Structure probing data (2A3 and DMS) for a 177-nucleotide construct. The DMS profile rests on 2,906 reads. For DMS the reverse transcriptase was MarathonRT. The 2A3 profile rests on 1,428 reads. Conditions: 150 mM KOAc, 10 mM MgCl2 and 150 mM bicine (pH 8.5), 24 C.
RNA sequence: GGGAACGACUCGAGUAGAGUCGAAAAGGAGCGGUGAUGGAUAUCAUAUCCAGGAAAGACCAAAGAGGUAGUGGACAAGUUGGAACAUAUGGUUUGAACACAUUCACCAACAUGGAAGUUCAACUCAACAUAAUCUAGCCUUCGGGCUAGAUUAUGUAAAAGAAACAACAACAACAAC
Reactivity to 2A3 in 0.01 (KOAc 150mM, MgCl2 10mM, bicine 150mM(pH8.5), 24C), signal-to-noise 2, nucleotides 027 to 126: g040g000a050g020c070g010g000u090g050a090u000g040g060a020u020a060u160c100a060u060a030u120c010c010a020g080g050a080a060a030g040a050c010c000a050a060a000g050a030g020g030u100a040g030u060g040g020a030c040a060a070g010u060u020g020g050a160a020c030a050u130a080u090g050g060u050u120u110g030a020a010c090a010c010a100u050u090c040a020c080c010a030a040c020a050u060g010g100a070a030g020u010u010c010a020a060c020u020c080a010
Reactivity to DMS in 0.01 (KOAc 150mM, MgCl2 10mM, bicine 150mM(pH8.5), 24C), signal-to-noise 4, nucleotides 027 to 126: g010g010a050g020c090g020g020u000g000a170u000g000g000a030u000a060u010c160a100u010a080u000c000c010a080g000g020a050a100a090g000a100c060c040a080a110a090g010a100g000g000u000a040g020u010g010g000a060c070a060a100g000u000u010g000g010a070a090c110a090u010a050u010g020g000u000u020u000g020a060a090c110a080c120a050u010u000c140a080c050c060a040a060c140a120u000g010g000a070a100g030u000u000c030a030a040c070u000c100a120